Description:
This 177-nucleotide RNA was probed chemically with DMS and 2A3. 2A3 adducts were read by reverse transcription with SuperScript II with manganese. The 2A3 profile rests on 6,636 reads. The RNA was probed in 150 mM KOAc, 10 mM MgCl2 and 150 mM bicine (pH 8.5) at 24 C.
RNA sequence: GGGAACGACUCGAGUAGAGUCGAAAAUUGGGGAUGCUUAGGCCUCUGGGUGUGACAUCUGUAGCUCCUUUAGGCAUCACUCCUCUUGGGACACAGAUCAAAUCACCUGGCAUGAUCUGGGACAGCGAUGAGGAGAGUUAUUCGUAACUCUCCUCAUAAAAGAAACAACAACAACAAC
Reactivity to DMS in 0.01 (KOAc 150mM, MgCl2 10mM, bicine 150mM(pH8.5), 24C), signal-to-noise 8, nucleotides 027 to 126: u000u010g010g000g010g020a070u000g020c070u010u010a090g010g010c080c020u000c050u000g010g010g010u000g010u010g000a180c270a040u000c030u000g000u000a110g020c030u000c010c010u000u000u000a030g010g020c240a120u010c230a100c220u000c010c010u000c030u000u000g000g010g010a050c070a060c010a010g000a020u000c030a080a080a170u010c030a030c030c030u000g000g000c160a100u010g000a040u000c030u000g000g000g000a090c070a080g010c140g010
Reactivity to 2A3 in 0.01 (KOAc 150mM, MgCl2 10mM, bicine 150mM(pH8.5), 24C), signal-to-noise 4, nucleotides 027 to 126: u080u060g000g010g000g020a020u070g030c030u060u070a060g000g080c030c000u010c040u030g040g000g000u010g010u010g010a020c010a050u010c030u030g020u030a060g020c040u020c000c000u010u030u040a020g010g000c040a200u120c050a080c080u050c000c000u080c030u020u040g010g010g030a010c010a010c000a030g030a010u030c030a030a220a110u200c010a020c010c000u020g010g010c010a050u080g020a080u010c030u040g010g000g030a050c030a030g030c060g080